[RMDB]
RNA sequence: GGGAACGACUCGAGUAGAGUCGAAAAGCACGUCCGGAAAGGCCCGUGCGAACACUUGAGCUCCGGCUUGUCCGCUCUUGUGGAUUAGGACGUUCUAGCUCCGGCUUGGCCGCUAGUUCGUCCGAAACGCCCUGCUGAGGUUCGCCUCAGCAGGGCGAAAAGAAACAACAACAACAAC
Reactivity to 2A3 in 0.01 (KOAc 150mM, MgCl2 10mM, bicine 150mM(pH8.5), 24C), signal-to-noise 1, nucleotides 027 to 126: g000c000a000c050g010u010c010c000g080g080a170a090a060g160g050c060c090c000g020u030g000c000g000a060a000c100a000c000u030u000g050a050g000c050u060c120c000g020g100c020u300u270g180u090c060c060g000c000u000c000u000u070g020u040g190g000a060u020u240a010g010g000a000c000g000u000u000c100u000a080g000c140u050c050c010g220g040c160u040u300g200g030c000c000g000c000u000a000g000u000u000c020g000u000c000c000g000a000a000a000
Record summary: The data come from the RNA Mapping Database (RMDB), library OK1LIB. Chemical mapping of a 177-nucleotide RNA with 2A3. For 2A3, 448 sequencing reads were counted.